[RMDB]
RNA sequence: GGGAACGACUCGAGUAGAGUCGAAAACAUGGAUCGUUCGCGAUCCAUGGCAGGUGGUGGUGGGACCAGCCGACCCAGGGUUUUGGCAUCCCAGCCUUUCCAAUCCAGCCUAUUUCGAUAGGCUGAAGUUAGAUUUAGGAUUCGUCCUAAAUCUAACAAAAGAAACAACAACAACAAC
Reactivity to 2A3 in 0.01 (KOAc 150mM, MgCl2 10mM, bicine 150mM(pH8.5), 24C), signal-to-noise 8, nucleotides 027 to 126: c000a000u000g000g000a000u000c020g020u100u060c230g000c010g120a000u000c000c000a000u000g000g020c100a040g010g090u090g030g040u070g010g250u070g030g020g000a030c020c030a020g010c000c010g050a110c010c030c040a040g080g040g010u050u120u200u170g020g000c020a040u040c000c000c000a020g040c010c000u030u050u010c010c010a020a050u050c040c010a000g000c000c000u000a010u020u110u080c230g070a030u000a000g000g000c000u000g000a010a000
Reactivity to DMS in 0.01 (KOAc 150mM, MgCl2 10mM, bicine 150mM(pH8.5), 24C), signal-to-noise 9, nucleotides 027 to 126: c010a010u000g000g000a010u000c000g020u010u010c230g020c020g010a010u000c000c000a000u000g010g010c160a060g010g020u000g000g020u000g010g020u000g010g010g000a110c040c030a060g000c020c010g010a090c050c040c060a170g000g000g010u000u000u010u000g020g010c050a150u000c010c010c010a140g000c010c010u000u000u000c010c010a140a160u010c120c010a010g010c000c000u000a010u000u000u010c160g010a020u000a000g000g010c000u000g000a020a060

This 177-nucleotide RNA was probed chemically with 2A3 and DMS. 2A3 adducts were read by reverse transcription with SuperScript II with manganese. Source: RMDB library M2PK50, as collected in RNAgym. Reactivities are given for positions 27 through 126. Reactivities are rounded to 0.1 and cut off at 0 and 3. The RNA was probed in 150 mM KOAc, 10 mM MgCl2 and 150 mM bicine (pH 8.5) at 24 C. DMS adducts were read by reverse transcription with MarathonRT.